[RMDB]
RNA sequence: GGGAACGACUCGAGUAGAGUCGAAAAAACGUUGCAUGAUCGUAAAACAUGCCCGGCUUACCGUGAGCCGCCUUUGAAAGAAAGGUUUACACGGACUCUGUUGCGUUUCGCACGUACCUAACUUGUGAAAACGGCAUCUUGUUCGCAAGAUGCCGAAGUCUGAACUACAGUUCGCUGUAGUUCAGACAAAAGAAACAACAACAACAAC
Reactivity to 2A3 in 0.01 (KOAc 150mM, MgCl2 10mM, bicine 150mM(pH8.5), 24C), signal-to-noise 2, nucleotides 027 to 156: a000a000c000g000u000u000g000c000a000u000g020a040u200c030g070u220a080a030a000a080c000a000u010g000c000c000c000g000g010c010u020u100a090c000c000g010u000g010a010g000c000c000g000c010c000u030u010u010g040a050a040a010g010a030a000a000g020g010u040u010u030a010c000a000c020g010g050a070c060u110c070u130g050u040u030g030c040g000u000u020u040c100g010c010a010c020g050u080a080c010c030u060a080a140c040u080u110g040u010g120a010a010a040a070c000g000g000c000a000u000c000u010u000g010u030u030c040g010c140a000a000g000a000u000g040c000c000g000a000a000
Record summary: The record gives the reactivity of an RNA of 207 nucleotides to 2A3. It was measured as part of the RMDB library M2RFOK. Conditions: 150 mM KOAc, 10 mM MgCl2 and 150 mM bicine (pH 8.5), 24 C. 2A3 adducts were read by reverse transcription with SuperScript II with manganese.